The data come from the RNA Mapping Database (RMDB), library 15KLIB. This 170-nucleotide RNA was probed chemically with 2A3 and DMS. For 2A3 the reverse transcriptase was SuperScript II with manganese. For 2A3, 1,365 sequencing reads were counted. DMS adducts were read by reverse transcription with MarathonRT.
[RMDB]
RNA sequence: GGGAACGACUCGAGUAGAGUCGAAAAAGUAUUUGAAAGUACACUUAGGAUUACUAGAACUCUGUCAACUCAGUACUGCCGGUUCGGUAGUUGUGAGUAUGCACAAGAGGGUGUUUGUAUUACCACAUAGCGUCCCCCUUCGGGGGGACGAAAAGAAACAACAACAACAAC
Reactivity to 2A3 in 0.01 (KOAc 150mM, MgCl2 10mM, bicine 150mM(pH8.5), 24C), signal-to-noise 1, nucleotides 027 to 129: a000g050u000a010u160u070u120g060a030a010a000g000u010a000c000a000c050u080u100a070g000g030a010u030u070a030c000u000a000g030a060a000c000u000c000u000g020u000c000a000a000c000u000c000a000g050u050a000c050u000g050c020c000g300g000u030u180c190g120g000u000a000g000u040u000g200u000g050a000g000u000a120u110g040c030a000c010a110a060g000a040g010g030g000u010g000u000u100u040g070u000a100u000u020a030c000c000a070c040a070u100a000g000
Reactivity to DMS in 0.01 (KOAc 150mM, MgCl2 10mM, bicine 150mM(pH8.5), 24C), signal-to-noise 2, nucleotides 027 to 129: a000g020u020a070u000u050u000g040a110a060a120g020u000a020c020a000c120u090u010a080g000g020a150u070u000a030c000u090a040g040a100a110c000u000c000u000g020u020c050a040a000c030u000c000a050g020u000a030c020u000g010c040c000g020g100u010u070c030g030g030u030a040g000u010u030g000u050g000a010g030u010a020u070g000c270a040c100a040a030g030a050g000g000g000u010g010u000u000u000g010u000a030u030u010a120c080c000a060c270a030u010a060g010